RNA sequence: GGGAACGACUCGAGUAGAGUCGAAAAGUAGACAGCUCUCCGUUGACGGUCGACGGCAUCAAGAUCACCAACGUCGAGGGCGAGGGUUGCGGGACGUGCAACAUCGCCGAGGCGCUCAAAAUGUCGCGCUAUGCCCACACUUCGGUGUGGGCAUAGCAAAAGAAACAACAACAACAAC
Reactivity to 2A3 in 0.01 (KOAc 150mM, MgCl2 10mM, bicine 150mM(pH8.5), 24C), signal-to-noise 1, nucleotides 027 to 126: g120u060a010g010a110c060a050g050c010u010c000u040c000c000g020u000u050g000a040c040g000g060u050c030g020a130c030g000g120c060a150u060c040a060a190g000a000u100c010a010c140c000a060a000c000g000u010c000g040a100g010g000g030c000g000a010g000g280g030u000u000g040c060g000g000g270a020c120g190u170g020c010a020a000c000a140u060c000g050c000c000g000a040g010g030c000g050c000u000c080a110a090a010a020u190g000u000c000g000c000
This 177-nucleotide RNA was probed chemically with 2A3. Source: RMDB library OK1LIB, as collected in RNAgym. Reactivities are given for positions 27 through 126. For 2A3, 544 sequencing reads were counted. 2A3 adducts were read by reverse transcription with SuperScript II with manganese.